[RMDB]
RNA sequence: GGGAACGACUCGAGUAGAGUCGAAAACAAGGAGGGCGAGGCACACGUCAUCCGCAACGCCGGAUGCGUGGUCACCGACGAUGUGAUCCGUUCACUGGCCAUCAGCCAGCGGCUGCUGGGAACCCGCUGCCCAGGAGAAAUUCGUUUCUCCUGGGCAAAAAGAAACAACAACAACAAC
Reactivity to DMS in 0.01 (KOAc 150mM, MgCl2 10mM, bicine 150mM(pH8.5), 24C), signal-to-noise 2, nucleotides 027 to 126: c140a080a130g010g000a130g020g010g020c050g010a140g000g030c170a070c040a030c030g000u010c020a010u000c020c020g050c030a080a120c300g000c170c030g000g000a020u000g020c000g000u000g010g000u000c060a040c070c050g020a110c070g000a070u000g020u000g010a030u000c050c020g000u010u010c030a080c040u000g000g000c000c020a070u000c090a080g000c060c010a090g020c120g010g010c110u000g000c050u020g000g010g010a070a070c040c010c000g000c150
Reactivity to 2A3 in 0.01 (KOAc 150mM, MgCl2 10mM, bicine 150mM(pH8.5), 24C), signal-to-noise 1, nucleotides 027 to 126: c040a060a050g040g020a030g090g000g000c020g060a130g040g000c050a030c010a000c170g130u120c070a010u010c000c000g000c060a260a240c180g110c150c020g000g000a000u020g030c010g000u020g040g030u020c050a040c010c060g120a110c040g040a100u060g030u020g030a000u030c020c040g000u110u070c050a040c050u020g040g000c010c000a110u110c030a010g020c010c020a040g030c060g070g000c010u080g040c000u000g000g000g070a040a070c000c000c000g000c080

Conditions: 150 mM KOAc, 10 mM MgCl2 and 150 mM bicine (pH 8.5), 24 C. Chemical mapping of a 177-nucleotide RNA with DMS and 2A3.